Structure probing data (2A3 and DMS) for a 177-nucleotide construct. Reactivities are given for positions 27 through 126. The reactions ran in a buffer of 150 mM KOAc, 10 mM MgCl2 and 150 mM bicine (pH 8.5), at 24 C. DMS adducts were read by reverse transcription with MarathonRT.
RNA sequence: GGGAACGACUCGAGUAGAGUCGAAAAUGUCGUGCGAGGACGGCUGGAACGCGAUCGGCUUAUCGGUCGCCGCGCAACCGGCCGGCACGGGCCCGCACGCGCACGACCCGCGGCCGGCGGCGGCCGAUACUAGGGUGGACUUCGGUCCACCCUAGUAAAAAGAAACAACAACAACAAC
Reactivity to 2A3 in 0.01 (KOAc 150mM, MgCl2 10mM, bicine 150mM(pH8.5), 24C), signal-to-noise 1, nucleotides 027 to 126: u060g020u040c010g000u010g090c060g000a050g090g060a080c030g030g050c020u010g040g060a090a030c090g040c030g100a130u090c030g050g050c060u020u120a030u030c020g000g020u000c010g000c020c000g040c000g000c020a010a050c040c010g060g040c010c030g020g000c070a040c010g010g000g010c050c040c000g020c020a100c090g140c000g020c000a010c020g020a050c050c010c010g000c000g000g020c000c000g000g030c090g010g000c010g000g010c040c020g010a000
Reactivity to DMS in 0.01 (KOAc 150mM, MgCl2 10mM, bicine 150mM(pH8.5), 24C), signal-to-noise 3, nucleotides 027 to 126: u020g030u000c040g040u010g030c030g010a120g040g000a080c090g010g010c010u000g000g010a120a070c140g000c040g000a070u000c050g020g000c080u000u000a050u000c010g020g000u000c000g030c020c000g010c110g010c150a120a180c210c030g000g010c000c010g010g000c160a260c070g020g020g020c010c030c050g010c070a100c160g010c120g000c020a040c050g000a070c010c010c020g020c030g020g020c010c000g000g000c040g000g010c000g020g000c010c000g000a020